[RMDB]
RNA sequence: GGGAACGACUCGAGUAGAGUCGAAAAGAUGUUGAAGUAGGUAUAGUGUGUACUAGUAUGUUAUUUGCAUGUUGAAAUAUUAUACUUAAUCUAGACGUUAGGCUAGAGUAAGUCUAUAGAAAAUCGAGCGUAAAGUGUUCUUCGGAACACUUUACGCAAAAGAAACAACAACAACAAC
Reactivity to DMS in 0.01 (KOAc 150mM, MgCl2 10mM, bicine 150mM(pH8.5), 24C), signal-to-noise 1, nucleotides 027 to 126: g030a040u000g000u000u000g010a080a170g030u010a030g000g030u000a020u000a050g040u010g020u000g010u000a120c040u000a070g050u010a080u000g000u000u000a120u010u010u010g020c130a070u000g020u010u000g000a120a090a050u000a020u000u000a020u010a010c000u000u000a010a030u000c000u000a010g000a030c010g020u000u020a070g000g000c000u000a020g000a040g010u000a010a040g010u000c050u030a060u000a080g000a070a050a120a090u000c080g050a270
The record gives the reactivity of an RNA of 177 nucleotides to DMS.
For DMS, 898 sequencing reads were counted.
The reactions ran in a buffer of 150 mM KOAc, 10 mM MgCl2 and 150 mM bicine (pH 8.5), at 24 C.